[RMDB]
RNA sequence: GGGAACGACUCGAGUAGAGUCGAAAAUCCUAAGUCUGUCCCGGGCGAGGCUAGCGCCAAUAAGCGUUGAAACAUGUUCGGAAACGAACAUGUGGAGCUUAAAAAUGCUAGCGAGCGGGAGGGACAGAUAUGGAAAAGGCAGUGUUCGCACUGCCAACGUUUAAGUCUGAUUCGUCAGACUUAAACGAAAAGAAACAACAACAACAAC
Reactivity to DMS in 0.01 (KOAc 150mM, MgCl2 10mM, bicine 150mM(pH8.5), 24C), signal-to-noise 2, nucleotides 027 to 156: u010c000c020u000a130a240g030u000c010u000g000u000c010c010c030g000g020g050c010g040a240g000g010c020u020a020g010c030g120c110c080a150a300u000a010a000g030c010g000u000u020g000a300a300a040c000a020u000g000u030u000c020g040g010a160a080a240c010g020a020a000c020a000u000g080u000g000g070a140g020c020u010u060a000a030a200a110a110u000g050c000u000a000g000c010g020a210g000c050g000g010g000a090g020g010g030a090c030a000g010a000u000a110u000g010g000a060a120a100a100g010g000c010a020g000u000g020u000u000c110g080c000a030c000u000g000c010c000a010a020
Reactivity to 2A3 in 0.01 (KOAc 150mM, MgCl2 10mM, bicine 150mM(pH8.5), 24C), signal-to-noise 3, nucleotides 027 to 156: u020c000c000u020a120a020g030u000c000u000g010u000c010c010c000g050g200g080c020g010a050g270g000c010u000a000g000c000g000c010c010a000a080u020a020a000g040c050g160u260u040g020a000a000a000c000a000u000g000u000u000c000g010g030a030a050a070c010g000a000a000c000a000u000g000u000g000g000a000g000c000u000u000a010a010a000a000a000u020g000c000u000a000g000c000g010a020g000c020g010g110g080a130g020g010g000a000c000a000g010a000u040a040u070g030g010a040a090a210a240g010g000c000a000g000u020g030u080u150c220g050c100a010c000u000g000c010c000a010a020